An RNA of 177 nucleotides, treated with DMS and 2A3 and read out base by base. Reactivities are given for positions 27 through 126. For DMS, 4,246 sequencing reads were counted. For DMS the reverse transcriptase was MarathonRT. For 2A3, 9,017 sequencing reads were counted.

RNA sequence: GGGAACGACUCGAGUAGAGUCGAAAAGAUAUGGACGAUUCAUGCUAGGUGACUCGGAAACGAGUACCUUGGACCAUGAUCGUCCUAAGUCAAAAGAGAUCCAACUUCUUCGGAAGUUGGAUCUCAACUCCUAUGUACACUUCGGUGUACAUAGGAGAAAAGAAACAACAACAACAAC
Reactivity to DMS in 0.01 (KOAc 150mM, MgCl2 10mM, bicine 150mM(pH8.5), 24C), signal-to-noise 4, nucleotides 027 to 126: g010a030u000a300u010g000g010a010c000g010a010u010u000c010a010u000g010c020u010a010g010g000u010g020a030c010u010c000g010g010a080a070a140c010g010a010g020u000a010c010c000u010u010g030g010a120c300c010a020u000g000a030u000c000g010u000c000c000u000a010a060g000u010c030a100a090a120a120g000a010g000a010u000c000c000a000a000c000u000u000c010u000u010c210g020g000a000a000g010u000u000g000g000a000u000c000u000c000a030a100
Reactivity to 2A3 in 0.01 (KOAc 150mM, MgCl2 10mM, bicine 150mM(pH8.5), 24C), signal-to-noise 4, nucleotides 027 to 126: g010a000u040a020u090g000g000a010c000g000a020u240u220c120a000u050g070c020u060a000g120g010u050g250a170c000u000c010g010g000a040a040a010c000g000a010g000u020a010c010c010u030u130g100g040a110c080c040a010u000g010a000u010c010g000u000c000c000u010a010a010g020u000c020a000a020a060a120g020a000g000a000u020c000c010a000a000c000u020u000c010u090u180c300g060g000a000a000g000u010u010g010g000a000u000c000u000c000a010a000